Chemical mapping of a 177-nucleotide RNA with DMS and 2A3. The reactions ran in a buffer of 150 mM KOAc, 10 mM MgCl2 and 150 mM bicine (pH 8.5), at 24 C. The 2A3 profile rests on 45,091 reads. Source: RMDB library OK2TRN, as collected in RNAgym. 2A3 adducts were read by reverse transcription with SuperScript II with manganese.
[RMDB]
RNA sequence: GGGAACGACUCGAGUAGAGUCGAAAAGCCGACGGACCACGCAAUCUUGCCGACGCAAUCUCCGUUGCCGCCUCGCCCGAGGCUCGCGAUCUCGGCACGCUCGUCGUCUUCGCCGGGAAGGUGCUCAGCGUAUACUAUGAUUCGUCAUAGUAUACGCAAAAGAAACAACAACAACAAC
Reactivity to DMS in 0.01 (KOAc 150mM, MgCl2 10mM, bicine 150mM(pH8.5), 24C), signal-to-noise 9, nucleotides 027 to 126: g020c040c020g010a090c080g010g000a080c070c060a080c110g010c090a110a090u010c080u000u000g010c020c030g010a090c120g010c100a080a080u010c070u000c040c060g020u000u000g010c030c080g010c020c010u000c050g010c070c090c090g010a060g000g010c020u000c070g000c040g010a100u000c050u000c020g000g010c020a080c090g000c050u000c080g010u000c040g010u000c090u000u000c060g010c020c020g010g000g010a070a070g010g020u000g000c040u000c090a200
Reactivity to 2A3 in 0.01 (KOAc 150mM, MgCl2 10mM, bicine 150mM(pH8.5), 24C), signal-to-noise 9, nucleotides 027 to 126: g040c010c000g000a020c020g010g020a030c020c030a040c090g040c030a040a160u080c050u100u130g040c020c020g040a060c060g000c060a040a100u040c040u010c070c020g050u040u060g040c030c020g000c000c000u010c040g060c020c040c050g010a040g010g010c030u030c040g040c010g050a100u000c020u000c020g010g010c010a010c020g050c010u090c060g130u020c010g030u010c070u130u100c070g000c010c010g000g020g030a040a040g060g020u060g020c020u040c090a020